[RMDB]
Conditions: 150 mM KOAc, 10 mM MgCl2 and 150 mM bicine (pH 8.5), 24 C.
Structure probing data (DMS and 2A3) for a 177-nucleotide construct.
DMS (dimethyl sulfate) methylates the pairing face of unpaired adenines and cytosines.
For 2A3, 1,479 sequencing reads were counted.
For DMS the reverse transcriptase was MarathonRT.

RNA sequence: GGGAACGACUCGAGUAGAGUCGAAAAAAACGAGGUCCAGAGUCACCUUUUCAGCAAAAUGCAGUUAGGGUGCUAGGAUUUCUCGAAAAUGAAAUUGGUCGUAUUAUGCAAGUAGGGCUUGCUUUUGCCCGUAUAAACUGUUCGCAGUUUAUACGGGAAAAGAAACAACAACAACAAC
Reactivity to DMS in 0.01 (KOAc 150mM, MgCl2 10mM, bicine 150mM(pH8.5), 24C), signal-to-noise 1, nucleotides 027 to 126: a110a070a050c010g000a010g010g000u010c000c000a150g030a090g000u000c000a010c000c000u000u000u000u020c000a020g020c020a090a110a120a110u020g000c000a000g030u000u000a010g000g010g020u000g000c020u000a190g000g000a040u000u020u030c000u000c000g010a060a070a050a040u000g010a090a100a040u000u000g010g030u000c010g010u000a080u000u000a080u010g000c150a030a050g000u010a070g020g030g000c020u000u000g000c030u000u000u000u000g000
Reactivity to 2A3 in 0.01 (KOAc 150mM, MgCl2 10mM, bicine 150mM(pH8.5), 24C), signal-to-noise 2, nucleotides 027 to 126: a010a010a020c020g000a000g010g000u000c000c020a040g020a010g260u150c020a020c000c020u040u000u010u010c010a010g000c010a070a280a300a190u180g020c000a020g000u010u040a020g030g000g020u000g030c000u040a030g000g000a000u060u200u030c010u000c000g070a070a060a020a040u170g010a050a030a050u090u130g030g030u040c020g010u080a100u170u040a050u240g070c040a060a020g030u010a040g030g060g110c020u040u010g040c030u110u050u010u120g150